This 177-nucleotide RNA was probed chemically with 2A3. The RNA was probed in 150 mM KOAc, 10 mM MgCl2 and 150 mM bicine (pH 8.5) at 24 C. Values cover nucleotides 27 to 126.
[RMDB]
RNA sequence: GGGAACGACUCGAGUAGAGUCGAAAAACAUGGUCAGAAGAGUCAAGAACUAUGAAAAUGGGUUUAUUAACAACCCUAUAGUGAUUUCUCCAACUACGACCGUUGGUGAAGCUAAGAGCAUGAAGGACACGUGCUCACCGUUCGCGGUGAGCACGUGAAAAGAAACAACAACAACAAC
Reactivity to 2A3 in 0.01 (KOAc 150mM, MgCl2 10mM, bicine 150mM(pH8.5), 24C), signal-to-noise 2, nucleotides 027 to 126: a000c020a000u000g000g040u030c000a000g050a040a020g050a060g100u090c040a080a040g000a000a010c040u050a000u270g080a220a220a180a300u250g000g000g000u000u020u020a240u130u300a160a000c050a000a000c000c010c010u000a030u000a000g000u060g110a130u000u070u050c070u050c000c000a100a190c000u080a000c070g180a150c000c070g000u000u030g010g000u030g010a030a030g050c020u070a200a000g000a070g130c020a060u050g050a200a000g070g000a000